[RMDB]
RNA sequence: GGGAACGACUCGAGUAGAGUCGAAAAUUAAAGCGCGAAAAAGAUCGAUCGAUCGUUUGAUCGCGCAAGUCGAAGUUUGAUACGGGCAUACUAGCUAGCUAGCUAGCAAAACAAACUUCGUAAAAAACUAAAUAGUCCAGUUCGCUGGACUAUUUAGAAAAGAAACAACAACAACAAC
Reactivity to 2A3 in 0.01 (KOAc 150mM, MgCl2 10mM, bicine 150mM(pH8.5), 24C), signal-to-noise 2, nucleotides 027 to 126: u090u060a130a060a000g000c010g000c000g070a000a010a060a030a010g010a020u050c050g080a090u210c260g020a010u010c040g110u060u070u000g090a070u020c000g030c010g020c010a000a000g010u010c000g000a000a000g010u010u000u010g090a120u090a170c050g050g080g070c070a040u050a170c040u000a010g000c000u000a030g140c040u100a000g000c000u030a000g020c060a010a100a000a020c010a000a010a000c000u020u010c000g000u030a100a100a000a000a000a030
Reactivity to DMS in 0.01 (KOAc 150mM, MgCl2 10mM, bicine 150mM(pH8.5), 24C), signal-to-noise 3, nucleotides 027 to 126: u000u020a060a090a170g000c010g010c000g000a030a050a040a060a060g000a010u000c010g010a150u010c200g000a000u000c010g000u010u000u000g000a230u000c020g010c000g040c000a050a060g020u010c010g020a020a010g010u000u000u010g000a090u010a100c230g010g000g030c120a150u000a130c000u000a010g000c010u000a140g020c180u010a070g020c000u010a010g010c030a050a060a090a130c000a010a000a000c010u000u000c000g010u000a000a020a080a070a040a090
Chemical mapping of a 177-nucleotide RNA with 2A3 and DMS. Source: RMDB library M2PK90, as collected in RNAgym. For 2A3, 1,691 sequencing reads were counted. The reactions ran in a buffer of 150 mM KOAc, 10 mM MgCl2 and 150 mM bicine (pH 8.5), at 24 C. High 2A3 reactivity points to a flexible backbone, as in loops and unpaired stretches.